[RMDB]
RNA sequence: GGGAACGACUCGAGUAGAGUCGAAAACCACCGCAAUUCGUUGCGGUGGGAAGGUGCAAUUCGCUGUCUGCACCACAGACGGCCAAUCCGUCAUAGCGAAAACUGGAGGGUCAUUCGUGACCCUCAAGUGAUACCUCGAUUUCGAUCGAGGUAUCACAAAAGAAACAACAACAACAAC
Reactivity to DMS in 0.01 (KOAc 150mM, MgCl2 10mM, bicine 150mM(pH8.5), 24C), signal-to-noise 3, nucleotides 027 to 126: c010c010a010c000c000g030c000a010a020u000u010c140g030u000u000g010c010g000g010u000g010g010g030a010a070g010g020u000g020c000a040a170u000u000c050g020c000u000g010u010c110u000g010c010a020c020c020a050c110a090g010a010c000g010g010c210c300a090a130u020c000c000g000u010c010a080u020a060g010c030g000a060a040a120a080c170u010g010g010a020g010g010g000u000c010a000u000u010c130g010u010g000a020c000c010c000u010c000a000a020
Reactivity to 2A3 in 0.01 (KOAc 150mM, MgCl2 10mM, bicine 150mM(pH8.5), 24C), signal-to-noise 3, nucleotides 027 to 126: c000c000a000c000c000g010c000a010a040u100u060c210g060u100u030g000c010g000g010u010g000g010g000a030a090g020g000u000g020c020a090a220u080u020c020g000c020u020g080u130c040u030g010c000a010c020c020a020c000a020g010a000c010g000g040c110c050a040a070u070c000c000g030u020c010a020u090a030g010c020g010a000a010a010a060c090u130g080g020a000g000g000g000u000c010a030u060u120c160g080u050g000a000c000c000c000u000c000a000a000